Overview:
Chemical mapping of a 177-nucleotide RNA with 2A3 and DMS. For 2A3, 6,605 sequencing reads were counted. It was measured as part of the RMDB library TTRDES. Values are in units of 0.01, from 0 to 300, in steps of 10.
RNA sequence: GGGAACGACUCGAGUAGAGUCGAAAAGAUAUGGAAUCGUUGUAGACAUGCUCCACUGGUCGGAAACGACCAAGAAGAGCAACAGCUACACCGAUUCCUAAGUCAAAGAUACUGUUCGCAGUAUCAAGGUUCAUUAAGAGUUCGCUCUUAAUGAACCAAAAGAAACAACAACAACAAC
Reactivity to 2A3 in 0.01 (KOAc 150mM, MgCl2 10mM, bicine 150mM(pH8.5), 24C), signal-to-noise 3, nucleotides 027 to 126: g000a010u060a040u150g020g000a000a000u000c000g000u010u020g020u000a000g060a090c080a210u250g020c000u020c000c010a050c080u020g010g000u000c000g000g000a040a070a050c010g010a000c010c010a010a000g070a070a000g010a010g030c020a030a050c080a040g050c010u010a000c000a000c020c000g000a000u010u030c000c000u000a060a010g020u000c030a150a090a100g010a000u010a010c000u020g090u100u150c300g020c160a010g000u000a010u000c030a030a130
Reactivity to DMS in 0.01 (KOAc 150mM, MgCl2 10mM, bicine 150mM(pH8.5), 24C), signal-to-noise 3, nucleotides 027 to 126: g000a040u000a300u010g000g010a000a000u000c010g040u000u000g000u000a000g000a070c080a300u000g010c000u000c000c030a300c260u000g010g010u000c020g010g000a100a050a210c000g020a000c020c000a000a020g010a240a240g000a020g000c010a030a060c300a100g010c010u000a000c000a010c040c000g000a020u010u000c000c000u000a030a080g000u000c020a100a090a160g010a020u000a000c000u000g000u000u010c240g030c000a020g000u000a010u010c010a120a090